Chemical mapping of a 177-nucleotide RNA with DMS. It was measured as part of the RMDB library TTRINS. Reactivities are rounded to 0.1 and cut off at 0 and 3. Values cover nucleotides 27 to 126. The reactions ran in a buffer of 150 mM KOAc, 10 mM MgCl2 and 150 mM bicine (pH 8.5), at 24 C. For DMS, 2,278 sequencing reads were counted.
RNA sequence: GGGAACGACUCGAGUAGAGUCGAAAAGAUAUGGAUCGUGGUGGGAGCUACAUUAGGCUCUUUUAUGGUCGGAAACGACCAUAAAAGAGCCUAAUGAAUAGCUUUGAUCACCAAGCGAUCCUAAGUCCAUGAAUUAAGACUUCGGUCUUAAUUCAUGAAAAGAAACAACAACAACAAC
Reactivity to DMS in 0.01 (KOAc 150mM, MgCl2 10mM, bicine 150mM(pH8.5), 24C), signal-to-noise 1, nucleotides 027 to 126: g020a090u010a300u000g000g000a000u010c010g070u010g020g020u000g010g000g010a020g000c000u010a030c000a040u000u000a010g010g030c000u010c000u010u010u000u000a000u000g020g010u010c010g020g000a140a140a250c000g010a030c000c000a010u010a000a000a010a000g020a030g020c010c000u000a000a000u000g000a180a140u000a000g020c000u000u000u010g010a150u030c000a000c000c020a120a170g010c020g010a010u000c000c000u000a030a100g010u010c070